[RMDB]
Chemical mapping of a 207-nucleotide RNA with DMS and 2A3. Values cover nucleotides 27 to 156. The RNA was probed in 150 mM KOAc, 10 mM MgCl2 and 150 mM bicine (pH 8.5) at 24 C. For 2A3 the reverse transcriptase was SuperScript II with manganese. It was measured as part of the RMDB library M2RFPK.
RNA sequence: GGGAACGACUCGAGUAGAGUCGAAAAAUCGCGCCUGGUCGGAACAUACCGACGGCGGGCCGGUGGGGAAUCAGGGGGCUACCGUGGGAUAGCGAUGAGACAGCCCCUCCGAUGGCACCAAGCGUCGCACACUGGCCAUACUUCGGUAUGGCCAGAAUUAGAUUAUGUGUUUCGACACAUAAUCUAAAAAAGAAACAACAACAACAAC
Reactivity to DMS in 0.01 (KOAc 150mM, MgCl2 10mM, bicine 150mM(pH8.5), 24C), signal-to-noise 2, nucleotides 027 to 156: a060u000c050g020c070g020c000c040u020g050g000u020c010g050g000a200a110c160a160u010a120c010c000g010a030c030g000g040c030g050g020g000c040c060g020g020u000g010g010g010g000a230a070u020c060a070g020g020g040g020g050c030u000a040c010c020g000u010g000g010g030a150u000a060g020c030g020a070u000g010a210g000a100c070a080g000c030c000c020c000u010c070c030g000a100u000g000g030c020a080c000c040a030a200g010c050g010u010c010g010c040a130c160a180c000u000g010g000c010c010a000u000a000c000u000u010c280g020g010u000a000u000g010g000c000c000a000g000a010a040
Reactivity to 2A3 in 0.01 (KOAc 150mM, MgCl2 10mM, bicine 150mM(pH8.5), 24C), signal-to-noise 2, nucleotides 027 to 156: a000u030c030g020c010g010c060c010u120g090g040u020c010g060g000a130a300c040a160u300a260c000c010g000a010c010g050g080c030g010g000g020c030c030g000g000u060g000g020g000g040a070a140u140c050a100g020g010g000g000g060c020u020a020c030c020g020u080g010g040g080a070u110a030g020c030g030a050u010g040a030g000a050c020a030g000c020c040c000c000u020c010c010g050a090u050g010g030c050a010c060c010a070a000g050c030g060u060c000g070c030a060c000a010c060u010g000g030c000c000a000u000a000c010u030u020c090g080g000u000a000u000g100g000c000c010a000g000a000a000